[RMDB]
The data come from the RNA Mapping Database (RMDB), library M2PK50. This 177-nucleotide RNA was probed chemically with DMS and 2A3. 2A3 adducts were read by reverse transcription with SuperScript II with manganese. DMS adducts were read by reverse transcription with MarathonRT. The RNA was probed in 150 mM KOAc, 10 mM MgCl2 and 150 mM bicine (pH 8.5) at 24 C.
RNA sequence: GGGAACGACUCGAGUAGAGUCGAAAAGGCAGCGAAUUCGUUCGCUGCCAAUACAGGACGUGGAGCCGGCUUCACGGCGCACGUCGAUGACGCGCGGGCCGGAGAAUCCAGAUUUCGAUCUGGAUAAUCAUGAAGUGAUCUUCGGAUCACUUCAUGAAAAAGAAACAACAACAACAAC
Reactivity to DMS in 0.01 (KOAc 150mM, MgCl2 10mM, bicine 150mM(pH8.5), 24C), signal-to-noise 3, nucleotides 027 to 126: g010g020c010a000g010c000g010a020a030u000u000c240g010u000u000c000g010c010u010g020c000c000a020a010u010a100c170a100g000g010a050c020g010u010g010g010a130g030c010c010g000g010c200u000u010c140a080c020g010g020c020g000c010a000c010g000u000c010g000a060u000g010a070c040g010c040g010c020g000g000g000c010c040g010g000a080g010a120a040u000c000c010a010g000a020u000u000u010c160g010a000u000c000u000g000g000a010u010a040a080
Reactivity to 2A3 in 0.01 (KOAc 150mM, MgCl2 10mM, bicine 150mM(pH8.5), 24C), signal-to-noise 2, nucleotides 027 to 126: g020g000c000a000g000c010g000a010a010u100u090c210g070u100u000c000g000c010u000g000c000c000a000a000u020a000c010a020g140g030a010c000g000u020g030g050a090g030c010c010g020g020c060u140u150c130a050c080g050g000c010g030c010a010c000g000u020c010g010a110u130g050a020c010g010c010g000c010g040g020g000c030c000g040g030a050g080a020a030u020c010c010a010g020a010u030u090u100c160g070a010u000c000u000g000g000a000u040a030a080